[RMDB]
RNA sequence: GGGAACGACUCGAGUAGAGUCGAAAACUUCUGGGCUGGAAGGAGGCCAGACCCCCAUUGCUGCAGAAAUUGAACAUUUUAUCCACAUCAUCACGGGUGUGGCUGUGUUCCUGGGUGUGUCUUUCUUCAUCCUUUCUCUCAUCCUUGAGUACACCUGGCACCUUGCAAUAUUCGUAUUGCAAGGUGCAAAAGAAACAACAACAACAAC
Reactivity to 2A3 in 0.01 (KOAc 150mM, MgCl2 10mM, bicine 150mM(pH8.5), 24C), signal-to-noise 1, nucleotides 027 to 156: c050u070u020c000u090g000g080g050c050u050g040g060a120a060g030g010a000g050g020c040c020a000g050a110c010c020c000c000c000a040u040u180g010c050u050g000c100a020g010a110a140a180u120u110g040a150a000c010a010u110u080u100u120a050u040c000c020a010c000a030u040c010a010u120c050a090c140g070g000g000u000g000u000g000g000c000u020g030u010g020u060u040c050c000u040g000g000g010u040g100u050g000u000c000u050u130u010c000u110u030c020a190u050c020c000u020u070u010c080u020c000u000c010a070u120c020c040u000u070g030a000g070u050a050c040a040c050c010u020g030
An RNA of 207 nucleotides, treated with 2A3 and read out base by base. Reactivities are given for positions 27 through 156. The reactions ran in a buffer of 150 mM KOAc, 10 mM MgCl2 and 150 mM bicine (pH 8.5), at 24 C.